[RMDB]
RNA sequence: GGGAACGACUCGAGUAGAGUCGAAAAAGGAUAAUUUAGGCACUCCAUACCCUACUCCGACUCAAUACGUCCCCGUCGUACAGAAUGGUAACAUAUCUCUCCAAAUAUCUGAGCUUGGGUAUACGGGAAUAGUCCGCCGCUUUCGAGCGGCGGACAAUGUGAUGGAAAUAUUCGUAUUUCCAUCACAAAAAGAAACAACAACAACAAC
Reactivity to 2A3 in 0.01 (KOAc 150mM, MgCl2 10mM, bicine 150mM(pH8.5), 24C), signal-to-noise 1, nucleotides 027 to 156: a000g090g000a100u110a020a130u110u080u190a130g070g000c030a060c030u070c050c000a070u060a070c000c050c000u010a000c060u010c070c000g100a020c000u090c200a180a210u190a140c020g040u080c010c000c010c000g050u040c070g000u010a040c040a050g040a080a120u070g040g010u100a090a030c070a070u160a100u110c080u000c000u000c020c020a030a040a040u030a070u090c030u070g000a040g050c050u060u050g040g030g000u040a030u030a020c020g020g000g040a000a070u040a120g000u010c000c000g000c100c000g220c050u050u050u080c120g010a000g000c000g000g000c030g000g000a000c000a000a030